[RMDB]
RNA sequence: GGGAACGACUCGAGUAGAGUCGAAAAAUUUAGGUAGAAGACAAUCUAGACAAGUACGAGAUGUAUCACAUUCAAGAGUUCAUCGAAUGACAUUCUCAAGACUUGCUGGAGAUCAUACGAUGGCUGACACGACGAUGAUGUUCGCAUCAUCGUCGUGAAAAGAAACAACAACAACAAC
Reactivity to DMS in 0.01 (KOAc 150mM, MgCl2 10mM, bicine 150mM(pH8.5), 24C), signal-to-noise 2, nucleotides 027 to 126: a090u000u010u010a080g030g000u000a040g010a150a060g010a030c060a130a130u000c040u010a060g030a170c000a030a050g000u000a070c300g020a000g010a020u000g010u000a120u020c250a220c060a040u000u000c010a080a050g030a150g040u030u020c240a090u010c100g000a020a070u000g000a030c030a000u010u000c010u000c000a080a150g000a020c020u000u000g010c020u000g020g020a000g000a050u000c060a040u010a010c010g020a110u000g000g020c020u000g000a210
Reactivity to 2A3 in 0.01 (KOAc 150mM, MgCl2 10mM, bicine 150mM(pH8.5), 24C), signal-to-noise 1, nucleotides 027 to 126: a000u100u110u090a090g000g040u020a010g040a140a000g050a030c040a040a030u030c010u010a000g030a090c000a010a000g000u000a020c060g000a010g000a000u000g000u030a100u120c090a030c000a050u000u000c020a090a110g050a010g140u240u290c050a070u070c100g000a000a000u030g030a000c000a000u280u030c010u010c050a030a020g190a090c000u020u030g000c010u020g010g000a020g020a050u050c050a010u000a050c080g100a100u130g070g050c050u030g010a060